Background
Source: RMDB library RNAMAK, as collected in RNAgym. This 207-nucleotide RNA was probed chemically with DMS. The reactions ran in a buffer of 150 mM KOAc, 10 mM MgCl2 and 150 mM bicine (pH 8.5), at 24 C. The DMS profile rests on 4,682 reads.

[RMDB]
RNA sequence: GGGAACGACUCGAGUAGAGUCGAAAAGGGGUCUGCUGUAGCUCUCCCUGAAAGCUUGGAUUUACUAAGGACUUACUGUACAGCUGAAGCCUCCACGGCUGUACAGUAAGUCCUUAGUUGUCAGCUUUCCUGGAGAGCGCAGCAGACGGAGGCACCCGAAUACUUUUAGGUUCGCCUAAAAGUAUUCAAAAGAAACAACAACAACAAC
Reactivity to DMS in 0.01 (KOAc 150mM, MgCl2 10mM, bicine 150mM(pH8.5), 24C), signal-to-noise 1, nucleotides 027 to 156: g020g010g030g040u010c010u000g020c000u000g010u000a070g060c010u000c000u000c010c010c010u020g010a020a010a020g000c020u020u020g060g010a200u010u000u010a050c010u010a020a020g010g000a050c000u000u000a010c000u010g010u010a030c010a010g010c010u000g010a080a110g010c020c030u000c010c000a300c040g000g020c000u010g020u000a010c010a020g030u000a000a010g000u000c000c010u000u000a000g010u000u000g020u000c080a030g000c020u000u000u010c000c040u000g010g040a020g000a010g040c010g000c000a010g030c000a010g010a000c010g010g010a040g040g040c020a100c030c040c030